[RMDB]
RNA sequence: GGGAACGACUCGAGUAGAGUCGAAAAGUCUUUCGUGGCUGGUGUGACCGCGCAAGGUGCGCGCGGUACGUAUCGAGCAGCGCUCAACUCUGAAAAACAUCAAGACCAUGUGUCUCUAACUGUGCCAAUACACAUACCUUCGGGUAUGUGAAAAGAAACAACAACAACAAC
Reactivity to 2A3 in 0.01 (KOAc 150mM, MgCl2 10mM, bicine 150mM(pH8.5), 24C), signal-to-noise 9, nucleotides 027 to 129: g020u010c020u020u140u100c050g050u050g020g000c010u010g000g040u050g040u070g040a020c000c000g000c000g000c040a110a130g180g060u130g090c080g000c000g000c000g010g000u010a040c020g020u020a040u110c060g020a010g010c060a030g050c040g030c070u030c030a040a100c030u020c040u110g050a100a060a030a030a010c020a070u090c070a110a050g070a170c000c010a040u070g050u020g040u020c020u000c000u070a100a110c050u060g040u050g060c010c000a050a020u110a080
Reactivity to DMS in 0.01 (KOAc 150mM, MgCl2 10mM, bicine 150mM(pH8.5), 24C), signal-to-noise 9, nucleotides 027 to 129: g030u030c020u010u060u030c020g040u030g020g040c040u000g010g030u030g020u060g020a010c040c020g050c000g030c000a130a120g020g040u030g000c100g040c010g000c010g000g020u000a030c030g030u040a000u030c150g020a050g030c050a120g040c150g020c090u010c050a070a050c100u000c000u040g010a050a040a050a070a060c060a010u010c080a080a080g030a110c040c020a060u040g020u050g020u020c030u020c050u030a070a070c070u040g000u030g030c040c020a090a080u060a170
An RNA of 170 nucleotides, treated with 2A3 and DMS and read out base by base. It was measured as part of the RMDB library 15KLIB. DMS (dimethyl sulfate) methylates the pairing face of unpaired adenines and cytosines. 2A3 adducts were read by reverse transcription with SuperScript II with manganese. Values cover nucleotides 27 to 129.